The record gives the reactivity of an RNA of 207 nucleotides to 2A3.
RNA sequence: GGGAACGACUCGAGUAGAGUCGAAAAACGAUGCGGGUCGCCACCGACGCCUCCCGCGGGGUGAUGGACCGGUUCCGCUCGAUGCCGAUGGCGCGUUCGGCGGUGCCGUUCGGGCAGACCGGCGCCGACAUCCUCAGCGGCGUCCUCGCCAUGGGGAGGUUAGUGUAUUCUUCGGAAUACACUAACCAAAAGAAACAACAACAACAAC
Reactivity to 2A3 in 0.01 (KOAc 150mM, MgCl2 10mM, bicine 150mM(pH8.5), 24C), signal-to-noise 2, nucleotides 027 to 156: a000c040g020a060u150g000c010g020g000g030u050c030g040c060c000a050c000c060g030a040c020g050c000c000u070c010c020c030g020c010g000g000g000g010u040g030a120u200g030g000a020c040c060g020g040u130u000c020c030g050c040u130c060g030a070u040g020c050c050g160a150u220g100g010c050g010c030g070u150u090c140g210g280c030g160g030u030g000c000c000g000u040u040c010g010g010g000c030a010g000a030c000c020g020g050c150g000c000c000g010a040c010a040u060c000c000u020c060a010g020c020g010g020c010g000u000c000c020u070c020g000c010c080a090u080g000g000g000g000a010

Record summary:
The RNA was probed in 150 mM KOAc, 10 mM MgCl2 and 150 mM bicine (pH 8.5) at 24 C. It was measured as part of the RMDB library OK3TST. The 2A3 profile rests on 1,352 reads.